[RMDB]
RNA sequence: GGGAACGACUCGAGUAGAGUCGAAAAGAAAGAAAGAAAGAAAUCUGACAGAAUGACGGAUUCGAUCGUUGUGGUCGGCGGGCCACCACGUCAUUCCUUCGCACUGUCGCCGGGCAGACCGCCAUAAAAAAGCGGAUCUACUUCGGUAGAUCCGCAACAUCAUUAUGAACUUCGGUUCAUAAUGAUGAAAAGAAACAACAACAACAAC
Reactivity to DMS in 0.01 (KOAc 150mM, MgCl2 10mM, bicine 150mM(pH8.5), 24C), signal-to-noise 2, nucleotides 027 to 156: g000a080a050a110g020a080a070a070g000a140a090a110g010a080a050a100u000c060u000g020a180c040a040g030a110a080u000g000a030c030g000g000a100u010u010c060g010a070u000c050g070u010u000g020u010g010g030u000c000g010g000c050g030g050g000c020c020a030c030c010a060c010g000u000c040a080u000u000c010c030u000u000c080g010c070a160c040u000g000u000c000g010c150c010g010g010g010c060a080g020a060c000c010g010c010c010a110u020a000a060a070a060a060a120g010c000g040g000a030u000c000u010a010c000u010u000c280g030g010u000a010g000a020u000c010c000g030c000a000a000
Reactivity to 2A3 in 0.01 (KOAc 150mM, MgCl2 10mM, bicine 150mM(pH8.5), 24C), signal-to-noise 9, nucleotides 027 to 156: g050a010a050a010g060a030a090a020g090a040a090a020g080a020a110a030u100c090u150g010a020c020a030g110a130a170u130g010a020c020g010g010a030u080u110c120g030a070u240c070g010u010u020g000u000g010g010u020c040g040g090c080g050g010g000c000c000a000c010c010a010c000g010u010c010a020u030u020c000c000u020u040c020g020c020a020c040u000g000u010c010g030c070c010g020g010g000c020a020g030a120c010c050g020c020c010a070u260a020a110a020a020a010a010g000c000g000g000a000u000c000u000a000c010u010u030c120g050g000u000a000g000a000u010c000c000g000c000a000a000